[RMDB]
RNA sequence: GGGAACGACUCGAGUAGAGUCGAAAAUACGAGGGCGUGGUCGACAUGUUUCAGACCGUGAAGACCCUGCGUACACAGCGUCCUGCCAUGGUGCAGACAGAGGUAACGCAGACCAGGCUGCAGGGCCAGGGCCUUGGCAGCAGCGCUGCUGGGAACCUACUAGGUGCUUCUUCGGAAGCACCUAGUAAAAAGAAACAACAACAACAAC
Reactivity to 2A3 in 0.01 (KOAc 150mM, MgCl2 10mM, bicine 150mM(pH8.5), 24C), signal-to-noise 2, nucleotides 027 to 156: u130a030c060g020a040g010g000g020c020g020u050g020g000u040c030g010a020c090a190u180g040u030u090u130c050a050g020a040c000c070g000u150g040a090a110g120a140c000c000c000u020g090c010g010u040a010c050a020c030a080g000c020g060u100c010c020u030g010c000c020a150u220g040g040u250g030c010a010g020a140c010a030g100a040g040g040u120a190a000c070g030c040a000g020a020c000c060a000g210g020c000u000g020c000a010g000g010g170c000c010a060g110g110g000c020c030u060u040g090g000c010a000g030c020a030g050c060g000c010u010g010c080u010g040g060g030a030a020c030c000
Reactivity to DMS in 0.01 (KOAc 150mM, MgCl2 10mM, bicine 150mM(pH8.5), 24C), signal-to-noise 1, nucleotides 027 to 156: u000a110c080g000a090g020g000g020c010g050u000g000g060u000c010g000a210c060a140u000g000u010u000u000c070a270g000a070c050c010g060u000g010a040a170g000a110c000c000c000u000g000c050g000u000a070c090a110c070a130g020c030g000u000c180c020u000g000c000c040a130u020g050g010u000g070c010a170g020a100c030a140g000a170g050g020u000a100a060c070g000c060a100g030a080c060c080a090g020g010c010u000g030c080a070g040g000g000c000c000a120g010g030g000c010c000u000u000g000g000c020a090g000c040a090g000c000g090c010u020g000c020u000g020g000g020a100a050c050c050